[RMDB]
RNA sequence: GGGAACGACUCGAGUAGAGUCGAAAAACCAAAUUGUGGGGCCUGCACCCGCAGCCAGGGCUCUCCUGGUUCAACGACUACAUGGUACGCGGCCGGAGCGUGAGCGUUCCGGUGAAAAUAUAGUCUCUCCUCGGGGACGCGCCCCCGGGACCGUGGCGAAAUGGUACAUCUUCGGAUGUACCAUUUCAAAAGAAACAACAACAACAAC
Reactivity to 2A3 in 0.01 (KOAc 150mM, MgCl2 10mM, bicine 150mM(pH8.5), 24C), signal-to-noise 1, nucleotides 027 to 156: a010c040c000a030a040a050u080u060g010u010g000g010g030g010c090c190u260g080c180a090c030c010c000g000c020a000g020c000c000a010g030g020g040c140u080c080u120c160c030u020g000g000u040u120c030a090a020c040g070a020c020u120a010c070a090u150g060g010u060a060c010g010c010g010g000c030c000g010g000a000g000c020g010u060g080a070g110c020g000u010u000c020c000g000g010u050g010a050a060a020a000u180a010u050a050g030u010c030u000c000u020c130c010u040c030g000g000g010g020a060c000g010c010g000c000c000c000c000c000g010g000g000a010c020c040g080u030g040g040c110
An RNA of 207 nucleotides, treated with 2A3 and read out base by base. Reactivities are given for positions 27 through 156. 2A3 adducts were read by reverse transcription with SuperScript II with manganese. Conditions: 150 mM KOAc, 10 mM MgCl2 and 150 mM bicine (pH 8.5), 24 C.